[RMDB]
RNA sequence: GGGAACGACUCGAGUAGAGUCGAAAAGAUAUGGAUCCUUAGAGACAUGAAGAUUUCGGAAACGAAAUACUUCAACAGCUCUCAAGGAUCCUAAGUCAAAACGAUUUACCGUUCGCGGUAAAUCGAAGUUUUCUAUCUUCUUCGGAAGAUAGAAAACAAAAGAAACAACAACAACAAC
Reactivity to 2A3 in 0.01 (KOAc 150mM, MgCl2 10mM, bicine 150mM(pH8.5), 24C), signal-to-noise 2, nucleotides 027 to 126: g000a000u010a000u060g000g000a010u010c020c000u000u040a140g020a000g020a050c090a230u140g010a010a020g040a040u020u010u000c010g000g000a020a010a000c020g020a010a020a010u200a300c010u010u010c000a050a020c060a060g060c030u000c010u000c020a000a010g000g000a000u010c000c000u010a000a010g020u000c000a000a060a070a200c010g010a000u030u020u000a000c010c000g030u050u130c300g010c020g110g000u000a010a000a020u000c000g020a060a010
Reactivity to DMS in 0.01 (KOAc 150mM, MgCl2 10mM, bicine 150mM(pH8.5), 24C), signal-to-noise 2, nucleotides 027 to 126: g000a020u000a160u010g000g000a020u000c010c000u010u000a160g010a010g010a050c060a210u010g000a000a000g010a090u000u000u000c000g010g010a030a030a080c000g010a000a000a000u000a140c020u010u000c000a070a220c300a080g000c170u000c000u000c070a010a000g000g020a000u000c000c000u000a010a060g000u010c040a120a080a100a290c000g010a010u010u000u000a000c000c000g020u000u030c200g030c010g000g000u000a010a000a000u000c000g000a010a070
The record gives the reactivity of an RNA of 177 nucleotides to 2A3 and DMS. Source: RMDB library TTRDES, as collected in RNAgym. Conditions: 150 mM KOAc, 10 mM MgCl2 and 150 mM bicine (pH 8.5), 24 C.